[RMDB]
RNA sequence: GGGAACGACUCGAGUAGAGUCGAAAAAUACUUGGAAAUUGAACCCCUAAAGAAUGGGAGUUAUUUGGUUUUAUCAAGUACUACAGACUGUGGCAUACCAGCUUACGUGCCUGUGGUUAUAACGGUGCUUCCAGGAUUAGUUCGCUAAUCCUGGAAGAAAAGAAACAACAACAACAAC
Reactivity to 2A3 in 0.01 (KOAc 150mM, MgCl2 10mM, bicine 150mM(pH8.5), 24C), signal-to-noise 1, nucleotides 027 to 126: a010u050a020c020u010u010g020g040a000a040a020u010u010g010a040a010c000c000c010c000u170a250a210a040g230a220a090u150g000g050g000a100g070u130u070a130u120u030u100g020g050u010u020u000u000a130u100c000a030a000g000u000a010c030u000a000c000a060g070a030c010u020g010u040g100g020c010a040u050a120c060c030a000g030c000u000u210a030c020g010u030g010c010c010u030g000u050g040g050u010u130a170u030a260a050c070g100g000u090g080
Reactivity to DMS in 0.01 (KOAc 150mM, MgCl2 10mM, bicine 150mM(pH8.5), 24C), signal-to-noise 2, nucleotides 027 to 126: a120u000a040c000u000u000g000g000a010a050a020u000u000g010a010a030c110c010c000c020u010a070a120a150g000a190a080u010g000g020g000a080g010u000u000a130u000u000u000g010g020u000u000u000u000a140u010c000a010a030g000u000a040c080u000a010c020a040g020a030c030u010g000u000g000g000c030a080u010a130c300c130a080g000c010u000u010a020c010g000u000g010c020c010u010g000u010g010g020u000u010a120u010a050a080c120g020g010u000g010
Conditions: 150 mM KOAc, 10 mM MgCl2 and 150 mM bicine (pH 8.5), 24 C. This 177-nucleotide RNA was probed chemically with 2A3 and DMS. For 2A3 the reverse transcriptase was SuperScript II with manganese. For DMS, 1,638 sequencing reads were counted.